[RMDB]
RNA sequence: GGGAACGACUCGAGUAGAGUCGAAAAUCUAACUCAUUCGUGAGUUAGAGUGAGCGCAGCGACCAUUGGGCCGGUGGCGCGCUGUCGCUGCCGCGCGUGGCGAUAGUGCUUGCUUCGGCAAGCACAAACGUUCUUGGAUUUUCGAAUCCAAGAACGUAAAAGAAACAACAACAACAAC
Reactivity to 2A3 in 0.01 (KOAc 150mM, MgCl2 10mM, bicine 150mM(pH8.5), 24C), signal-to-noise 2, nucleotides 027 to 126: u000c000u010a000a000c000u020c010a030u020u150c220g120u040g000a000g000u000u010a000g020a000g000u140g080a030g040c060g000c030a060g030c050g040a100c030c020a070u070u200g090g070g010c010c000g090g040u050g040g030c050g000c010g000c070u050g080u140c020g000c000u020g010c000c020g070c020g010c050g050u050g030g080c060g030a100u090a110g010u010g000c030u000u000g020c010u040u010c170g070g000c000a010a000g000c010a010c020a000a030
Reactivity to DMS in 0.01 (KOAc 150mM, MgCl2 10mM, bicine 150mM(pH8.5), 24C), signal-to-noise 2, nucleotides 027 to 126: u000c000u000a000a020c000u000c000a030u010u010c190g000u010g000a020g010u000u000a000g000a030g000u010g000a130g020c060g000c010a060g000c010g000a090c040c080a110u000u000g030g010g030c050c020g020g020u010g000g010c020g020c010g030c100u000g010u010c000g020c000u000g000c010c030g010c110g000c060g010u010g010g000c040g000a100u000a080g020u000g000c000u000u000g000c000u000u000c150g000g000c000a000a010g000c000a020c000a040a060